RNA sequence: GGGAACGACUCGAGUAGAGUCGAAAACUUUAAGGAUUUUUACACAUGACAGACAGCAAAGGCAAGGUUCCAAAGAACACUCCACUUUCCAAGCAUUCGGUUCUGCCAUAUUUACACGUAAAAGCUGACCAUGACCACUGUGAAUGCCCCCGUGUGAUAUACUCAGUAUGUUCGCAUACUGAGUAUAAAAAGAAACAACAACAACAAC
Reactivity to 2A3 in 0.01 (KOAc 150mM, MgCl2 10mM, bicine 150mM(pH8.5), 24C), signal-to-noise 2, nucleotides 027 to 156: c050u110u130u170a110a140g050g000a100u190u120u010u090u230a070c060a020c020a060u120g100a060c020a030g020a010c030a020g040c020a130a050a000g010g000c030a060a020g020g000u040u000c030c000a100a000a030g060a060a020c040a040c070u040c070c010a060c020u070u120u040c050c010a050a000g030c010a080u080u110c040g080g000u090u020c020u070g060c000c010a020u030a090u120u090u120a060c080a010c030g070u060a010a190a000a000g000c010u030g010a050c000c020a020u060g050a120c000c020a060c130u050g020u040g090a090a060u070g020c000c000c050c010c010g030u050g000u000g020a010
Reactivity to DMS in 0.01 (KOAc 150mM, MgCl2 10mM, bicine 150mM(pH8.5), 24C), signal-to-noise 2, nucleotides 027 to 156: c030u010u000u020a100a100g000g040a040u000u000u000u000u010a070c050a150c070a060u000g010a130c030a090g010a070c050a130g010c060a040a110a090g010g020c020a080a090g000g010u020u000c020c030a060a040a110g010a070a100c010a070c060u000c010c050a040c050u020u000u000c040c040a050a240g020c020a080u000u010c040g000g010u010u000c030u000g040c020c010a090u000a080u000u000u010a070c070a080c090g040u000a060a040a030a060g020c040u000g000a090c060c030a000u020g030a100c040c050a060c040u000g050u030g010a080a120u000g020c040c010c010c050c020g020u000g030u000g020a170

Source: RMDB library OK3TST, as collected in RNAgym. The record gives the reactivity of an RNA of 207 nucleotides to 2A3 and DMS. The 2A3 profile rests on 1,061 reads. DMS adducts were read by reverse transcription with MarathonRT. Values cover nucleotides 27 to 156.